This 177-nucleotide RNA was probed chemically with DMS and 2A3.
For 2A3 the reverse transcriptase was SuperScript II with manganese.
Values cover nucleotides 27 to 126.
The RNA was probed in 150 mM KOAc, 10 mM MgCl2 and 150 mM bicine (pH 8.5) at 24 C.
RNA sequence: GGGAACGACUCGAGUAGAGUCGAAAAGAUAUGGAGCUCGACAUGGGUGUGUUUCGGAAACGAAACUCAACCCAACAGCGAGAACUACUCCUAAGUCAAAACACCUCAAUGUUCGCAUUGAGGUGAACAUAUAAAGUCCCUUCGGGGACUUUAUAUGAAAAGAAACAACAACAACAAC
Reactivity to DMS in 0.01 (KOAc 150mM, MgCl2 10mM, bicine 150mM(pH8.5), 24C), signal-to-noise 4, nucleotides 027 to 126: g010a040u000a300u000g010g000a020g010c020u000c010g000a060c090a180u000g010g030g020u000g010u000g010u000u000u010c000g010g010a110a080a200c010g000a010a000a020c000u010c020a100a070c000c000c010a010a060c240a140g010c010g000a020g010a070a030c040u010a300c010u010c000c000u000a060a220g020u010c040a070a080a070a170c000a010c000c000u000c000a020a000u010g010u000u020c260g020c020a010u000u000g000a020g010g010u000g000a010a060
Reactivity to 2A3 in 0.01 (KOAc 150mM, MgCl2 10mM, bicine 150mM(pH8.5), 24C), signal-to-noise 2, nucleotides 027 to 126: g000a000u060a050u200g020g000a020g030c000u030c020g200a260c240a160u080g010g000g000u000g000u000g010u030u000u010c010g010g030a060a090a020c000g000a000a010a000c010u000c020a160a300c010c030c000a010a000c040a020g020c010g000a000g020a050a060c110u180a070c010u110c010c000u050a190a010g080u040c010a000a000a150a170c000a010c010c000u010c000a000a000u010g010u040u140c300g030c150a000u000u020g000a010g010g000u000g000a000a000